Conditions: 150 mM KOAc, 10 mM MgCl2 and 150 mM bicine (pH 8.5), 24 C. This 177-nucleotide RNA was probed chemically with DMS and 2A3. 2A3 adducts were read by reverse transcription with SuperScript II with manganese. For DMS, 992 sequencing reads were counted.
RNA sequence: GGGAACGACUCGAGUAGAGUCGAAAACACAGAGUCUGACUCAGUCUCUGAGUCUCACAGACUGAGACACUGUCUCAGACAGUGAGUGACAGACAGACAGUCUCACUGACUGUGUGAGAGUGACUGAAGGCCUGACAGGUUUCGACCUGUCAGGCCUAAAAGAAACAACAACAACAAC
Reactivity to DMS in 0.01 (KOAc 150mM, MgCl2 10mM, bicine 150mM(pH8.5), 24C), signal-to-noise 1, nucleotides 027 to 126: c110a060c110a130g010a070g030u000c020u010g020a110c020u000c020a070g000u030c010u000c030u000g010a060g000u000c040u010c030a040c070a060g000a050c000u000g010a010g020a100c040a100c150u000g020u000c020u010c000a010g000a180c030a030g030u000g000a000g010u000g010a130c100a000g000a050c040a070g010a120c200a140g000u000c000u000c030a070c020u000g010a050c060u000g000u010g020u000g000a040g000a020g000u010g010a150c010u000g030a130
Reactivity to 2A3 in 0.01 (KOAc 150mM, MgCl2 10mM, bicine 150mM(pH8.5), 24C), signal-to-noise 1, nucleotides 027 to 126: c050a010c020a010g040a020g110u040c030u070g050a130c030u000c040a000g070u010c030u000c030u090g060a050g150u000c020u020c010a030c010a050g180a130c010u000g060a020g010a000c140a110c290u210g010u030c000u000c000a000g060a050c010a020g020u010g050a030g010u020g070a110c120a050g010a000c000a000g090a040c080a040g030u000c010u030c020a000c020u070g040a040c000u050g040u000g000u030g080a010g030a010g030u070g010a030c010u000g000a070